[RMDB]
RNA sequence: GGGAACGACUCGAGUAGAGUCGAAAAACAACAGAUAGCUGGAACCAGCGUAGAAUUCUACGCAUAUCCAUAGCGAAUGGUACCUGUAAAGAAAAUAAGUUUGGAUGUACAAGUACCAACAGCCGGGCAUGCCAUGGUGAUGUCAAUCACAUAUGCAUGCUCAGGCGCACUUCGGUGCGCCUGAGCAAAAAGAAACAACAACAACAAC
Reactivity to 2A3 in 0.01 (KOAc 150mM, MgCl2 10mM, bicine 150mM(pH8.5), 24C), signal-to-noise 2, nucleotides 027 to 156: a000c020a000a000c010a060g080a060u150a060g010c010u040g030g040a160a150c070c010a040g010c000g000u020a000g070a260a300u260u080c020u000a010c000g010c010a010u040a030u110c000c010a060u180a040g000c030g090a060a060u050g010g000u030a010c000c000u000g000u000a020a090a060g120a100a060a040a140u100a190a130g080u030u070u050g040g010a060u010g020u010a020c000a000a000g030u000a010c000c090a040a020c020a020g070c010c000g010g010g000c010a000u020g020c060c000a000u080g060g010u060g000a020u050g090u210c150a060a030u030c000a000c010a070u110a000u140g000c010a010